[RMDB]
RNA sequence: GGGAACGACUCGAGUAGAGUCGAAAACGUCGAAUUGCGUUGUGUCGGUAACGAGUACCGGGCCUACAUCAACGGCAGUGCUCUGCUCUACUACAAGGACGCUGCCAACACCGUCCCUGUGGGACCGGUCAGGUCAUAGCUUCGGCUAUGACCUGACAAAAGAAACAACAACAACAAC
Reactivity to 2A3 in 0.01 (KOAc 150mM, MgCl2 10mM, bicine 150mM(pH8.5), 24C), signal-to-noise 2, nucleotides 027 to 126: c020g030u030c080g090a190a280u100u170g070c050g040u000u050g070u060g000u100c020g000g020u050a090a070c070g040a150g030u050a020c000c000g000g030g000c000c000u020a040c000a060u180c030a070a070c070g010g000c020a010g000u030g020c080u010c000u050g040c000u000c090u120a170c040u010a060c050a100a010g000g000a000c000g030c000u030g000c100c030a100a020c060a010c060c020g010u050c000c000c000u030g040u100g000g010g030a010c020c020g020
Reactivity to DMS in 0.01 (KOAc 150mM, MgCl2 10mM, bicine 150mM(pH8.5), 24C), signal-to-noise 3, nucleotides 027 to 126: c050g010u010c110g000a130a140u010u000g010c060g020u000u000g010u000g020u000c040g030g000u000a060a080c120g000a110g020u010a100c040c010g000g000g000c000c000u000a050c030a070u010c150a030a140c160g000g000c000a020g010u000g020c070u000c030u000g000c130u000c050u000a070c070u000a100c150a120a050g010g000a040c000g030c030u000g010c020c000a150a060c150a090c070c050g020u000c020c010c000u000g020u010g010g000g000a030c050c060g000

About this RNA:
Chemical mapping of a 177-nucleotide RNA with 2A3 and DMS. It was measured as part of the RMDB library OK2TST. For DMS the reverse transcriptase was MarathonRT. As a SHAPE reagent, 2A3 marks flexible, mostly unpaired nucleotides at the ribose 2'-OH. Conditions: 150 mM KOAc, 10 mM MgCl2 and 150 mM bicine (pH 8.5), 24 C. For 2A3, 1,583 sequencing reads were counted.